Structure probing data (2A3 and DMS) for a 177-nucleotide construct.
DMS adducts were read by reverse transcription with MarathonRT.
The reactions ran in a buffer of 150 mM KOAc, 10 mM MgCl2 and 150 mM bicine (pH 8.5), at 24 C.
The data come from the RNA Mapping Database (RMDB), library RFM100.

[RMDB]
RNA sequence: GGGAACGACUCGAGUAGAGUCGAAAAUGCAAAUCAUCUACUUAUGUCGUGAGACAUUAUUUAACCACGUUAAAGUAUAAUAAUAUAAGUUAGGUAUGCCCUUAUAAAGACUUAGGUAACGCUAAGGGAUGGAGAGAAACUUCGGUUUCUCUCCAUCAAAAGAAACAACAACAACAAC
Reactivity to 2A3 in 0.01 (KOAc 150mM, MgCl2 10mM, bicine 150mM(pH8.5), 24C), signal-to-noise 4, nucleotides 027 to 126: u100g000c030a000a070a100u130c040a030u020c040u020a010c000u030u000a020u180g070u010c010g050u010g020a090g060a080c050a070u070u080a110u060u180u080a070a030c040c010a060c120g020u020u070a190a080a030g060u050a040u060a300a040u070a050a050u110a020u000a020a000g020u010u060a030g040g020u020a040u080g030c000c000c000u080u050a180u120a180a090a020g040a030c020u010u010a000g020g000u110a010a020c050g000c130u000a000a000g080g060
Reactivity to DMS in 0.01 (KOAc 150mM, MgCl2 10mM, bicine 150mM(pH8.5), 24C), signal-to-noise 2, nucleotides 027 to 126: u060g010c260a020a120a110u050c070a040u000c020u000a030c000u010u000a040u000g040u060c010g000u000g000a060g000a140c050a070u020u000a090u010u010u000a090a050c010c060a080c130g000u010u010a060a040a100g000u010a050u050a030a040u010a000a070u040a080u060a130a080g000u000u000a000g010g000u000a060u000g000c040c010c000u020u070a030u020a040a140a080g000a060c020u010u000a010g000g000u010a020a070c260g000c050u030a000a060g000g010